The data come from the RNA Mapping Database (RMDB), library M2RFPK.
The record gives the reactivity of an RNA of 207 nucleotides to DMS and 2A3.
For 2A3, 1,265 sequencing reads were counted.
The reactions ran in a buffer of 150 mM KOAc, 10 mM MgCl2 and 150 mM bicine (pH 8.5), at 24 C.
RNA sequence: GGGAACGACUCGAGUAGAGUCGAAAAGACGCCUUUAGAAGAAGAGGCUAGGGGGUAUUCCGGUGUGGGAUACUUAGUAAUAUGCAACGGUAAUUGCAUAAGAUUGUAGGACGGAAUUUACAGUCUUUAGAGAUAAGCACGUUCGCGUGCUUAUCAAACACUGAUGCAACUUCGGUUGCAUCAGUGUAAAAGAAACAACAACAACAAC
Reactivity to DMS in 0.01 (KOAc 150mM, MgCl2 10mM, bicine 150mM(pH8.5), 24C), signal-to-noise 1, nucleotides 027 to 156: g000a150c050g010c000c000u000u000u000a110g000a200a120g000a190a180g000a040g010g040c000u020a140g000g070g000g080g020u000a080u000u000c030c000g050g020u000g020u010g020g030g000a130u000a010c060u000u040a130g010u000a070a120u000a030u000g000c000a030a020c050g000g000u000a050a300u030u040g000c000a080u000a030a120g020a030u010u010g020u000a040g020g000a120c070g020g030a100a240u000u000u000a040c040a070g000u000c020u000u020u000a060g000a150g010a010u000a020a000g010c000a010c030g040u000u000c260g010c020g120u010g030c000u000u040a010u010c010a040a090
Reactivity to 2A3 in 0.01 (KOAc 150mM, MgCl2 10mM, bicine 150mM(pH8.5), 24C), signal-to-noise 2, nucleotides 027 to 156: g020a010c070g000c000c000u080u070u070a160g030a250a010g040a040a000g000a040g030g000c030u050a070g050g000g000g000g000u040a050u050u040c080c050g150g040u160g020u160g050g000g000a000u000a020c000u010u030a060g000u040a060a120u010a040u120g010c000a000a030c050g230g050u170a100a100u020u040g020c000a000u000a030a010g030a020u010u120g010u030a000g010g030a050c070g020g060a050a030u060u100u070a040c040a000g000u000c000u020u030u020a110g080a000g000a040u000a000a000g000c010a000c000g020u060u100c230g020c000g120u000g000c000u000u000a000u000c000a010a000